[RMDB]
RNA sequence: GGGAACGACUCGAGUAGAGUCGAAAACGGGUACGAGGCAAUGCUUAAGAACUAAGUUGAGCAUUAAAAUACCCAAUAGACGACCUUAAAUAGAUGAUUAGUUCUUCAUCUAUGCCUCGUUGUCUAGGGUACUGUUUGAUUUCGAUCAGGCAGUACCAAAAGAAACAACAACAACAAC
Reactivity to 2A3 in 0.01 (KOAc 150mM, MgCl2 10mM, bicine 150mM(pH8.5), 24C), signal-to-noise 1, nucleotides 027 to 126: c140g020g060g080u290a050c060g040a010g000g100c040a040a000u050g060c010u110u020a120a100g150a280a150c220u220a120a090g190u060u040g030a000g000c000a000u000u030a000a000a000a000u050a020c000c000c000a000a000u110a040g040a000c060g010a050c010c000u070u070a040a120a000u010a000g020a000u000g000a010u110u090a090g140u180u140c020u050u000c010a000u000c000u000a010u140g020c030c000u000c020g000u040u130g060u000c040u080a090g300

Chemical mapping of a 177-nucleotide RNA with 2A3. 2A3 adducts were read by reverse transcription with SuperScript II with manganese.